[RMDB]
This 207-nucleotide RNA was probed chemically with DMS and 2A3. For DMS, 2,808 sequencing reads were counted. High DMS reactivity at an A or C suggests that its Watson-Crick edge is free.
RNA sequence: GGGAACGACUCGAGUAGAGUCGAAAAGGCGUAGCCGACAACAUGCCCAGGUAGCCCAGACCUUCAAGGCUACGGUGCGUUCCGACGCACGGUCUGAUUCUUCACAACGACGUUCACCGCGUCUUCUACAACCGGCAAAGAUUCGUCUUUGCCGGAACUGCAUUCUAUACUUCGGUAUAGAAUGCAGAAAAGAAACAACAACAACAAC
Reactivity to DMS in 0.01 (KOAc 150mM, MgCl2 10mM, bicine 150mM(pH8.5), 24C), signal-to-noise 2, nucleotides 027 to 156: g060g010c010g000u000a110g040c020c000g050a300c060a090a060c020a110u000g020c020c000c020a160g000g000u000a080g000c040c030c210a090g000a160c030c030u010u000c050a030a300g050g000c000u030a030c000g000g010u000g000c000g000u000u000c210c100g040a180c010g000c020a020c040g000g020u010c000u000g010a250u010u000c000u020u020c050a120c000a060a050c030g010a030c000g020u000u000c070a080c090c050g030c040g000u000c010u010u000c030u000a180c060a080a180c000c000g040g000c010a000a030a030g030a070u000u000c240g040u020c000u000u000u000g030c000c020g010g000a000a010
Reactivity to 2A3 in 0.01 (KOAc 150mM, MgCl2 10mM, bicine 150mM(pH8.5), 24C), signal-to-noise 6, nucleotides 027 to 156: g050g000c130g120u140a060g010c040c020g080a050c040a090a050c030a070u170g020c010c000c030a030g030g000u010a010g020c020c070c120a030g000a010c010c010u040u030c010a020a000g000g010c000u000a000c000g020g000u000g000c000g010u060u180c030c180g130a030c000g010c000a000c010g020g000u000c000u000g030a060u150u090c070u150u110c060a070c050a240a060c110g030a010c010g090u210u220c090a040c120c040g000c000g020u000c050u070u040c030u090a110c050a140a110c010c000g000g000c000a000a000a010g000a010u050u120c160g040u000c120u010u000u010g000c010c010g000g000a000a000

Values cover nucleotides 27 to 156.